[RMDB]
RNA sequence: GGGAACGACUCGAGUAGAGUCGAAAAAAAAAUGCCCAAUCUCAGGCAAUGGAAUGAUGGAGCAUACCAAAUAAGAAUGAGCAAUUAAAGAGCUACAGAAAGAACCAAGGGAGUUUUUAAAGUAUCUUGGAUUAGGUGAUUGUCAGGUCACUGGUCAUAUACCUGACUAUUUCGAUAGUCAGGUAUAAAAAGAAACAACAACAACAAC
Reactivity to DMS in 0.01 (KOAc 150mM, MgCl2 10mM, bicine 150mM(pH8.5), 24C), signal-to-noise 2, nucleotides 027 to 156: a010a000a040a050a070u000g040c030c010c000a050a120u000c070u020c060a040g000g010c040a090a080u000g010g000a090a060u000g020a140u010g000g010a070g030c040a100u010a140c030c040a030a090a070u000a060a070g020a060a080u000g000a090g000c030a060a060u000u020a090a070a090g010a060g000c030u000a070c050a110g000a070a090a020g000a110a050c040c010a020a080g010g010g010a140g040u020u010u000u020u020a020a050a090g020u000a020u000c030u010u000g020g000a100u000u000a090g050g010u010g000a100u000u000g000u000c100a080g050g000u000c040a030c040u010g020g020u000c030a250
Reactivity to 2A3 in 0.01 (KOAc 150mM, MgCl2 10mM, bicine 150mM(pH8.5), 24C), signal-to-noise 2, nucleotides 027 to 156: a000a000a010a000a040u060g000c010c020c020a050a060u010c030u020c100a050g050g000c050a040a150u080g020g050a120a050u050g050a030u060g060g040a020g000c000a030u090a140c020c030a010a030a040u150a040a030g050a040a030u110g000a010g010c010a030a020u100u050a160a120a030g070a040g020c020u100a050c020a030g140a100a060a010g010a030a000c010c030a020a020g020g010g010a070g010u070u030u070u110u150a070a110a000g000u040a080u070c060u050u060g020g010a040u050u090a030g010g020u020g010a010u010u050g100u150c060a020g080g010u010c010a000c040u010g010g020u040c030a010
This 207-nucleotide RNA was probed chemically with DMS and 2A3. The DMS profile rests on 3,493 reads. The RNA was probed in 150 mM KOAc, 10 mM MgCl2 and 150 mM bicine (pH 8.5) at 24 C. DMS adducts were read by reverse transcription with MarathonRT. For 2A3, 1,212 sequencing reads were counted. 2A3 adducts were read by reverse transcription with SuperScript II with manganese. It was measured as part of the RMDB library OK3TST.